The data come from the RNA Mapping Database (RMDB), library PKBHTP. The record gives the reactivity of an RNA of 207 nucleotides to 2A3 and DMS. Values cover nucleotides 27 to 156.
RNA sequence: GGGAACGACUCGAGUAGAGUCGAAAAGCCCUAAAGAAUUCGUUCUUUAGGGCACACUUUGUUUUUUAGCUGUGCUGGGUGCGAGUGUGGCAGCGGCUCGUGCCUACGAACACACCGCUGUCAUGCCAAAUCAAGAUCCUAAUUCGUUAGGAUCUUGUGAUAGGACUACAUUCGUGUAGUCCUAUCAAAAAGAAACAACAACAACAAC
Reactivity to 2A3 in 0.01 (KOAc 150mM, MgCl2 10mM, bicine 150mM(pH8.5), 24C), signal-to-noise 3, nucleotides 027 to 156: g010c010c000c010u010a010a020a000g020a010a010u110u120c220g030u030u020c020u000u000u000a020g000g000g080c010a000c000a000c000u120u110u060g110u030u070u030u010u040u150a070g030c070u080g080u110g040c050u040g030g020g000u060g010c020g030a090g020u010g020u040g000g000c000a010g000c000g000g040c030u060c110g000u010g010c040c060u090a050c050g100a190a010c070a010c010a010c080c040g000c010u000g010u020c000a020u040g000c020c020a040a080a090u130c000a010a000g040a000u020c000c000u010a010a040u050u080c210g070u040u000a010g010g000a000u020c000u000u000g000
Reactivity to DMS in 0.01 (KOAc 150mM, MgCl2 10mM, bicine 150mM(pH8.5), 24C), signal-to-noise 1, nucleotides 027 to 156: g060c010c010c000u000a000a020a050g010a040a050u010u020c300g020u010u000c010u000u010u000a020g030g040g030c000a000c030a030c120u000u000u000g010u000u000u000u000u000u000a060g010c050u000g040u000g040c030u010g020g000g020u000g070c050g060a050g040u000g030u030g000g010c090a060g020c050g000g020c020u000c100g060u000g000c010c010u000a110c180g020a100a070c040a050c030a050c000c030g040c000u000g010u000c030a080u010g000c030c040a050a050a100u010c000a010a010g010a010u000c000c000u010a020a060u000u000c300g030u000u000a000g000g000a010u000c000u000u000g010